[RMDB]
RNA sequence: GGGAACGACUCGAGUAGAGUCGAAAACAUACUAGUUUUCUAGUAUGAGGAUCCUUUUGGAUCCGAACGACGGUGUGUCUCUACCAGCUUUUUUUGCUCCGUCGGGCUCAUCUGCUUUUGGACUUUUGUCCUUGCAGAUGUGUCAAGGUAGGACAGACCGUCAGGUCCUAUUCGUAGGACCUGACGGAAAAGAAACAACAACAACAAC
Reactivity to 2A3 in 0.01 (KOAc 150mM, MgCl2 10mM, bicine 150mM(pH8.5), 24C), signal-to-noise 1, nucleotides 027 to 156: c000a000u020a000c010u000a010g170u140u150u140u190c000u010a000g000u000a000u010g000a040g010g010a030u040c000c000u130u290u100u300g010g020a030u000c010c000g030a080a010c020g010a000c000g050g000u020g010u010g000u050c010u000c000u220a000c000c010a010g040c000u170u080u180u210u080u300u300g010c000u000c010c010g010u000c000g000g000g010c010u000c000a000u000c000u000g030c020u190u150u150u180g000g000a000c000u150u210u150u300g020u000c010c010u000u000g000c000a010g000a000u000g020u000g010u010c020a020a040g000g010u000a000g000g020a000c010a010g060a010
Background:
An RNA of 207 nucleotides, treated with 2A3 and read out base by base. The reactions ran in a buffer of 150 mM KOAc, 10 mM MgCl2 and 150 mM bicine (pH 8.5), at 24 C. The 2A3 profile rests on 544 reads. Reactivities are given for positions 27 through 156.